[RMDB]
RNA sequence: GGGAACGACUCGAGUAGAGUCGAAAAAGAGUUCGCUUCGGCGAACUCUACAACGGGAAAACGGCCUCCCGCAAAGAUAAGGCGGAUUCCGUCCAAGCGCCGAGAGUGGUGCGUUCGCGCACCACAACUAUACCACACGUUUCGACGUGUGGUAUAGAAAAGAAACAACAACAACAAC
Reactivity to DMS in 0.01 (KOAc 150mM, MgCl2 10mM, bicine 150mM(pH8.5), 24C), signal-to-noise 4, nucleotides 027 to 126: a020g000a010g010u000u000c000g010c000u000u010c220g020g030c000g010a010a000c000u010c000u000a030c090a090a110c020g000g000g000a010a010a120a150c020g000g000c000c010u000c010c000c010g000c080a110a080a110g000a110u000a070a150g000g010c020g010g000a180u010u010c010c000g000u000c030c130a040a040g000c100g010c020c010g010a290g020a120g010u000g020g010u000g020c000g010u000u000c160g010c010g020c000a010c000c000a000c010a020a110
Reactivity to 2A3 in 0.01 (KOAc 150mM, MgCl2 10mM, bicine 150mM(pH8.5), 24C), signal-to-noise 4, nucleotides 027 to 126: a000g010a010g000u000u000c010g000c040u050u090c210g060g000c010g000a000a000c000u000c000u000a000c010a080a010c010g010g000g010a010a100a020a060c010g020g010c000c000u010c020c000c010g010c060a160a150a000g110a130u200a130a090g020g010c060g050g080a300u300u120c040c000g010u020c030c060a030a010g040c040g000c190c020g020a010g040a010g020u000g010g000u000g020c010g000u000u040c200g000c000g000c080a010c000c000a000c010a000a000